[RMDB]
RNA sequence: GGGAACGACUCGAGUAGAGUCGAAAAUACAAUGAUGUUCCAGGCCACUUAUACAAACUAAUAUGAGCCCUACUUUUUCAUCCACAGCAACUAUACCAGAAAAAGGAAUAUUGCUCAAGCAUCAACACAUUUGCUAUACAUUCGUGUAUAGCAAAUGAAAAGAAACAACAACAACAAC
Reactivity to DMS in 0.01 (KOAc 150mM, MgCl2 10mM, bicine 150mM(pH8.5), 24C), signal-to-noise 7, nucleotides 027 to 126: u010a100c180a090a100u010g010a080u000g000u000u000c030c020a100g010g020c020c050a050c060u000u010a060u010a080c080a080a070a120c130u010a060a090u000a060u000g010a090g000c040c070c050u000a070c060u010u000u000u000u010c040a100u000c050c050a050c120a040g010c070a020a040c130u010a060u000a100c040c030a090g000a030a060a050a080a050g010g000a100a070u000a070u000u000g010c020u000c100a060a070g010c080a060u000c060a050a080c150a160
Reactivity to 2A3 in 0.01 (KOAc 150mM, MgCl2 10mM, bicine 150mM(pH8.5), 24C), signal-to-noise 5, nucleotides 027 to 126: u120a010c050a030a160u140g030a030u070g040u050u020c030c020a000g020g030c020c030a050c040u110u090a060u080a200c100a060a210a020c040u130a050a130u090a100u170g040a030g020c020c010c010u050a100c030u070u070u030u060u120c020a060u000c020c020a030c000a050g050c010a040a030c010u050a030u050a220c020c030a020g160a090a130a030a010a000g050g010a060a030u070a050u070u080g000c000u020c040a040a030g020c000a070u030c010a050a040c050a000